[RMDB]
RNA sequence: GGGAACGACUCGAGUAGAGUCGAAAAUGUCACUGAAAGCAGAAAACACAGAAGCUUCUCACACUGGCCCUGGAGUAUGUGUAUUAUCCUUGCAAUUAAGAAAAUGUGAGCCAUCGAAGACAGAGAGCCAUAUCAGACAGUUCGCUGUCUGAUAUGGAAAAGAAACAACAACAACAAC
Reactivity to 2A3 in 0.01 (KOAc 150mM, MgCl2 10mM, bicine 150mM(pH8.5), 24C), signal-to-noise 2, nucleotides 027 to 126: u050g010u010c010a000c040u060g060a050a070a020g020c030a030g090a110a140a060a030c100a000c010a020g110a160a020g090c020u050u040c020u000c040a020c010a010c050u050g040g000c000c000c000u030g030g000a030g030u110a060u190g090u010g010u000a060u140u040a030u060c000c010u020u040g000c050a140a210u110u080a180a070g050a080a080a010a020u090g020u010g010a000g020c010c000a040u070c050g020a040a000g030a030c050a010g100a000g020a010g070
Reactivity to DMS in 0.01 (KOAc 150mM, MgCl2 10mM, bicine 150mM(pH8.5), 24C), signal-to-noise 4, nucleotides 027 to 126: u020g010u010c040a110c040u000g000a110a090a100g020c020a070g000a120a090a160a060c070a070c070a040g030a150a130g000c040u000u000c030u000c060a050c070a080c060u000g000g000c040c040c040u010g010g010a040g010u000a030u000g030u000g010u010a050u010u010a090u010c040c030u000u010g010c040a060a050u010u000a070a070g000a050a040a060a050u010g010u000g010a070g010c070c020a040u000c060g000a060a070g000a080c060a060g000a110g000a110g010